[RMDB]
RNA sequence: GGGAACGACUCGAGUAGAGUCGAAAAUGGCUUUUCUGUUCGUUAACAACCAGUUUUAGCUUAGUGGCAAGAUAGCGAGUAAUACUCUUGAGGACACGUUCGCCCGCUCGUUGAGACUUGACCAAAAACACGAUACCUGGUUCGCCAGGUAUCGUGUAAAAGAAACAACAACAACAAC
Reactivity to DMS in 0.01 (KOAc 150mM, MgCl2 10mM, bicine 150mM(pH8.5), 24C), signal-to-noise 2, nucleotides 027 to 126: u020g000g000c020u000u000u000u000c030u010g030u010u000c030g010u000u020a070a070c130a080a100c110c050a090g010u000u000u000u040a010g030c100u000u000a040g030u000g000g020c020a010a020g010a060u000a030g020c050g000a060g020u010a120a090u020a140c050u050c040u000u000g020a080g040g020a100c090a050c100g000u010u000c050g020c030c030c040g020c020u000c070g000u010u000g000a090g000a180c040u000u000g000a080c090c020a100a080a080a090
Reactivity to 2A3 in 0.01 (KOAc 150mM, MgCl2 10mM, bicine 150mM(pH8.5), 24C), signal-to-noise 1, nucleotides 027 to 126: u080g010g030c000u000u070u080u050c010u050g070u020u060c040g000u020u100a060a030c080a060a010c080c000a080g030u050u040u090u200a000g010c010u080u010a060g050u020g040g000c000a030a030g000a140u030a100g040c050g010a010g030u010a050a140u100a140c020u040c020u130u100g040a020g060g020a060c040a020c110g060u140u050c130g030c020c020c000g090c000u040c000g070u030u040g080a030g070a170c060u020u100g040a090c050c010a000a160a000a000